[RMDB]
RNA sequence: GGGAACGACUCGAGUAGAGUCGAAAAGCAAGCGAUGAUCCGGGGAUAUCCGAAUGGGGUAACCUGAUCGAGGCAAUACUCGAUCGUUCAUACCUGAAUACAUAGGGUAUGAAACGCGAAACCCGCUCCAACUCCUCUACUUCGGUAGAGGAGUUGGAAAAGAAACAACAACAACAAC
Reactivity to 2A3 in 0.01 (KOAc 150mM, MgCl2 10mM, bicine 150mM(pH8.5), 24C), signal-to-noise 2, nucleotides 027 to 126: g080c040a030a100g040c000g130a130u040g030a080u030c100c050g000g000g020g040a060u010a060u090c000c000g110a130a220u300g060g020g000g000u040a020a070c000c010u000g010a020u000c000g040a000g000g080c060a020a020u060a100c000u000c000g000a040u020c060g010u010u000c010a010u000a000c000c000u000g000a000a030u070a040c000a010u020a010g000g000g040u010a010u000g030a020a100a030c010g000c010g080a070a040a040c020c020c020g000c010u000
An RNA of 177 nucleotides, treated with 2A3 and read out base by base. The 2A3 profile rests on 872 reads. Source: RMDB library RFM100, as collected in RNAgym. Reactivities are given for positions 27 through 126. The reactions ran in a buffer of 150 mM KOAc, 10 mM MgCl2 and 150 mM bicine (pH 8.5), at 24 C.